[RMDB]
Overview: Conditions: 150 mM KOAc, 10 mM MgCl2 and 150 mM bicine (pH 8.5), 24 C. Chemical mapping of a 177-nucleotide RNA with 2A3 and DMS. For 2A3 the reverse transcriptase was SuperScript II with manganese. Source: RMDB library OK2TST, as collected in RNAgym.
RNA sequence: GGGAACGACUCGAGUAGAGUCGAAAAUCGGAGUCCGACACCACCAGCCGGGUGCGGGUCAGUUCGGAGAACGGUGGCCGGGUGGUGUUCGCCCGCCUGGGCUGGCCGGGCUACCGGGUGAGCAUCAAAUAUCAUAUGAGUUCGCUCAUAUGAUAUUAAAAGAAACAACAACAACAAC
Reactivity to 2A3 in 0.01 (KOAc 150mM, MgCl2 10mM, bicine 150mM(pH8.5), 24C), signal-to-noise 7, nucleotides 027 to 126: u100c000g010g010a010g030u000c010c010g020a040c050a090c080c010a010c000c010a000g030c020c020g140g000g040u140g030c040g020g010g030u070c040a020g030u050u070c030g080g020a130g030a180a050c050g060g070u080g060g010c030c020g040g020g010u060g010g040u070g090u050u030c010g010c000c000c010g000c000c020u090g010g040g000c020u020g020g000c020c000g010g000g020c020u190a300c010c020g000g010g030u090g030a030g040c020a030u080c050a030
Reactivity to DMS in 0.01 (KOAc 150mM, MgCl2 10mM, bicine 150mM(pH8.5), 24C), signal-to-noise 9, nucleotides 027 to 126: u010c020g010g010a100g010u000c010c010g010a130c080a160c090c070a210c040c010a060g010c040c020g010g010g010u010g020c040g010g000g000u000c070a110g010u000u010c040g010g000a110g000a070a080c050g010g020u000g010g010c010c010g010g010g020u000g000g020u000g010u010u010c100g010c020c000c010g010c060c040u000g010g010g010c030u000g000g010c070c030g010g000g000c040u000a050c050c010g010g000g010u000g000a110g010c100a080u010c110a080